[RMDB]
RNA sequence: GGGAACGACUCGAGUAGAGUCGAAAAUGUGCUGUAACACGAGCCCACCCGCGAGUGGCGUGGCCGACCUUAGCCUCUGGGGCGCCCCCUGUCGUUUGGGUCCCCCCCCUCUAUUGGGGAGAAGCAGGCGGAAGAUUACAUUCGUGUAAUCUUCCGCAAAAGAAACAACAACAACAAC
Reactivity to DMS in 0.01 (KOAc 150mM, MgCl2 10mM, bicine 150mM(pH8.5), 24C), signal-to-noise 1, nucleotides 027 to 126: u040g040u000g000c060u030g000u090a070a270c070a090c080g000a190g000c010c030c000a130c180c040c150g000c090g000a090g020u010g030g000c070g000u010g000g000c000c030g040a000c030c090u000u000a190g090c040c000u000c070u000g030g000g030g000c020g000c080c020c000c000c030u000g000u000c040g000u010u000u000g000g020g000u000c000c000c000c000c000c000c000c000u000c300u020a160u010u020g000g000g000g000a030g010a140a080g070c270a180g000
Reactivity to 2A3 in 0.01 (KOAc 150mM, MgCl2 10mM, bicine 150mM(pH8.5), 24C), signal-to-noise 2, nucleotides 027 to 126: u160g020u070g030c090u090g160u160a130a010c040a010c100g080a000g060c040c010c000a050c010c000c000g020c040g040a010g040u100g000g070c060g020u110g000g050c020c000g000a090c000c030u060u090a030g000c020c020u020c050u060g000g020g000g000c060g030c010c010c000c010c010u000g070u120c060g020u030u090u090g030g010g010u040c000c000c010c000c000c020c040c030u080c010u160a250u170u270g020g000g010g010a060g010a040a020g000c030a030g140
The record gives the reactivity of an RNA of 177 nucleotides to DMS and 2A3. Conditions: 150 mM KOAc, 10 mM MgCl2 and 150 mM bicine (pH 8.5), 24 C. For DMS the reverse transcriptase was MarathonRT. 2A3 adducts were read by reverse transcription with SuperScript II with manganese. The 2A3 profile rests on 966 reads.